[RMDB]
RNA sequence: GGGAACGACUCGAGUAGAGUCGAAAAGGUUGUCAUAGCUGACACCUUACAGGAAACUCCUGUUGUGCCUGAUACUGUUGAAGUCCCACCGCAAGUGGUGAAACUUCCGUCUGCACCUCAGACUAUCGUACUAAAGAGUUCGCUCUUUAGAAAAGAAACAACAACAACAAC
Reactivity to 2A3 in 0.01 (KOAc 150mM, MgCl2 10mM, bicine 150mM(pH8.5), 24C), signal-to-noise 9, nucleotides 027 to 129: g060g000u180u110g000u040c010a030u110a110g070c140u050g050a010c000a000c000c000u010u020a030c020a020g040g060a090a130a070c050u040c030c000u010g020u040u020g060u050g030c000c020u030g030a050u050a130c080u100g120u280u160g040a010a000g040u060c010c000c000a020c010c010g130c120a120a070g020u050g070g000u130g080a110a060a030c000u020u010c000c010g010u000c000u020g010c060a080c000c020u100c020a000g010a020c010u040a030u150c070g070u040a040
Reactivity to DMS in 0.01 (KOAc 150mM, MgCl2 10mM, bicine 150mM(pH8.5), 24C), signal-to-noise 9, nucleotides 027 to 129: g000g000u050u060g030u030c000a060u010a160g040c260u000g030a020c010a010c000c000u010u010a100c060a100g010g000a150a120a140c120u030c000c000u020g030u000u000g000u030g030c060c060u000g000a030u030a070c100u040g010u030u050g010a030a030g020u020c050c000c000a000c030c070g030c240a140a250g010u000g010g000u050g030a060a080a020c020u000u000c030c050g000u000c030u000g010c170a110c070c070u000c000a020g000a070c060u000a050u020c070g010u050a130